[RMDB]
Conditions: 150 mM KOAc, 10 mM MgCl2 and 150 mM bicine (pH 8.5), 24 C. This 207-nucleotide RNA was probed chemically with DMS and 2A3.
RNA sequence: GGGAACGACUCGAGUAGAGUCGAAAACAGCCGUGGAGGCGCGAUAACAUCCGUUCACUUCUCAAACAUGUUGAUUUAUGCAAACUCUCUUGAGUACGGUCAUUCACAACAAGCACCAAACGGCGUAGUCGGACUGGUUGCAUUGAGAUUGCGAUCGCAAGUCGACUAUUUUCGAAUAGUCGACUUGAAAAGAAACAACAACAACAAC
Reactivity to DMS in 0.01 (KOAc 150mM, MgCl2 10mM, bicine 150mM(pH8.5), 24C), signal-to-noise 3, nucleotides 027 to 156: c050a100g010c000c030g060u020g040g000a150g020g020c030g020c020g000a250u020a120a100c050a300u010c030c020g030u000u000c060a060c080u000u010c070u000c030a120a150a130c060a050u000g030u010u000g000a180u000u000u000a070u010g020c060a070a030a070c020u000c030u020c100u000u010g010a080g020u000a080c010g010g040u000c060a100u000u000c030a070c030a040a090c050a040a100g040c000a090c060c020a050a080a080c050g020g000c030g030u020a080g030u000c030g000g020a100c040u000g020g010u000u000g030c010a100u000u020g000a110g010a090u010u000g010c030g000a070u000c010g000
Reactivity to 2A3 in 0.01 (KOAc 150mM, MgCl2 10mM, bicine 150mM(pH8.5), 24C), signal-to-noise 6, nucleotides 027 to 156: c040a010g040c020c000g050u080g060g120a070g020g040c040g000c040g050a030u080a140a060c050a110u020c040c010g020u060u060c050a050c060u080u000c020u000c000a150a170a090c070a090u100g020u040u030g080a280u030u040u130a050u090g030c030a030a080a110c010u000c000u010c060u120u270g000a000g010u060a080c050g030g080u100c030a030u020u060c040a030c000a100a050c010a070a030g010c010a020c020c000a050a070a050c010g020g000c060g050u070a040g040u040c010g000g070a120c060u030g030g020u090u110g000c080a100u020u050g020a040g030a080u010u100g020c040g010a030u050c030g000
Values cover nucleotides 27 to 156.